Overview: Conditions: 150 mM KOAc, 10 mM MgCl2 and 150 mM bicine (pH 8.5), 24 C. The record gives the reactivity of an RNA of 177 nucleotides to 2A3 and DMS. Reactivities are given for positions 27 through 126. For DMS, 3,337 sequencing reads were counted. The 2A3 profile rests on 2,437 reads.

[RMDB]
RNA sequence: GGGAACGACUCGAGUAGAGUCGAAAAUGACGGGCUUUCAGCUGCUGUCCACCGACGGGAUCUAUCCGCUGCUGAUCAUGAUCCUGCUGCCGGUCCUGGUGGGCCUUGACGUGUCGACGCGACGGGCAACUCUGCAUCAGUUCGCUGAUGCAGAGUUAAAAGAAACAACAACAACAAC
Reactivity to 2A3 in 0.01 (KOAc 150mM, MgCl2 10mM, bicine 150mM(pH8.5), 24C), signal-to-noise 2, nucleotides 027 to 126: u190g030a030c020g040g020g010c020u110u130u160c110a030g010c020u200g060c030u050g060u010c020c020a030c000c050g100a100c050g020g000g000a020u000c010u040a050u040c030c050g110c180u100g000c030u080g030a060u080c040a030u190g040a020u040c010c000u020g020c020u040g010c010c000g060g000u030c010c010u030g010g000u030g020g000g000c000c000u060u070g020a060c030g050u080g000u080c030g020a070c000g060c040g050a070c050g020g030g000c040
Reactivity to DMS in 0.01 (KOAc 150mM, MgCl2 10mM, bicine 150mM(pH8.5), 24C), signal-to-noise 2, nucleotides 027 to 126: u000g010a060c060g000g010g000c060u010u000u000c100a080g010c040u000g000c030u010g010u000c010c080a070c050c020g000a160c040g010g000g000a020u010c040u000a110u000c020c060g000c120u010g020c130u010g000a040u010c180a060u000g000a040u000c010c000u000g000c080u010g000c060c050g040g000u000c030c040u000g010g010u000g000g000g000c040c060u000u000g020a070c090g000u000g000u010c080g030a110c040g020c050g000a070c050g000g030g000c090